[RMDB]
RNA sequence: GGGAACGACUCGAGUAGAGUCGAAAAUGCCAGCCUAAGGAACACGUAAAACGUGGGAACAGACAAACAAGCUGCUGCCUAUUACAGAGAUAGAUAAUUAACUUUGGACCAUUACAUGCAAUUCAUCAGCUUAUCUUUUUCAAACUUUAUAUAAGAAGCUAUCAGGUAAUUUCGAUUACCUGAUAGCAAAAGAAACAACAACAACAAC
Reactivity to 2A3 in 0.01 (KOAc 150mM, MgCl2 10mM, bicine 150mM(pH8.5), 24C), signal-to-noise 5, nucleotides 027 to 156: u120g040c020c010a000g010c000c010u080a080a100g080g010a080a010c010a010c020g030u070a060a060a130a070c030g000u050g020g010g010a040a020c030a020g140a080c050a020a110a000c010a050a010g020c010u090g000c030u020g010c010c000u070a080u090u070a040c040a040g030a000g010a040u060a050g030a040u070a100a070u180u120a120a050c040u050u080u090g030g020a020c020c010a050u070u110a040c010a050u060g030c020a020a070u040u080c010a070u030c010a040g030c000u040u050a060u110c000u040u080u030u070u030c010a100a020a020c010u100u160u040a150u090a010u090a130a080g110a100a000
Reactivity to DMS in 0.01 (KOAc 150mM, MgCl2 10mM, bicine 150mM(pH8.5), 24C), signal-to-noise 2, nucleotides 027 to 156: u000g000c000c000a100g000c030c010u070a070a140g000g020a200a090c050a040c040g000u010a150a090a070a300c030g030u000g000g030g010a150a160c070a110g010a070c060a140a070a040c070a090a140g000c000u000g020c030u000g010c030c030u000a140u000u000a110c040a210g010a110g030a050u000a040g010a110u010a070a050u010u010a030a070c070u000u000u000g040g020a060c050c040a060u000u000a060c110a100u010g010c040a050a150u000u010c040a070u010c060a040g010c120u000u000a070u000c010u000u000u020u010u020c020a060a080a120c020u000u000u000a060u010a100u010a080a110g020a120a250